[RMDB]
RNA sequence: GGGAACGACUCGAGUAGAGUCGAAAAUGCAAAUUCGUUUGCACAUCGCCGUAGGCGAUCCUACCCACCCUUUCUACUCCCGCAUGAUUCGAAAGAGUCAUGGAAGGGAGUAGAAAGGAGGGAUCGCCUAAACGGAUGACUUGUAGUUCGCUACAAAGUUUACAACUUUCUUCGGAAAGUUGUAAACAAAAGAAACAACAACAACAAC
Reactivity to 2A3 in 0.01 (KOAc 150mM, MgCl2 10mM, bicine 150mM(pH8.5), 24C), signal-to-noise 1, nucleotides 027 to 156: u060g000c010a000a000a040u140u110c210g110u020u010u040g030c040a010c020a070u050c030g030c080c130g050u010a010g000g000c010g000a000u010c010c010u120a200c020c010c000a070c000c020c000u000u000u000c000u000a000c000u000c000c000c000g140c020a000u150g000a020u010u020c000g000a070a060a100g000a080g000u000c000a000u000g020g000a110a160g000g000g000a000g000u020a000g000a000a010a020g000g000a010g000g000g000a000u000c000g010c000c000u000a000a000a000c000g000g010a030u040g090a040c040u020u020g000u010a020g060u080u080c190g050c100u020a010c030a030a100a000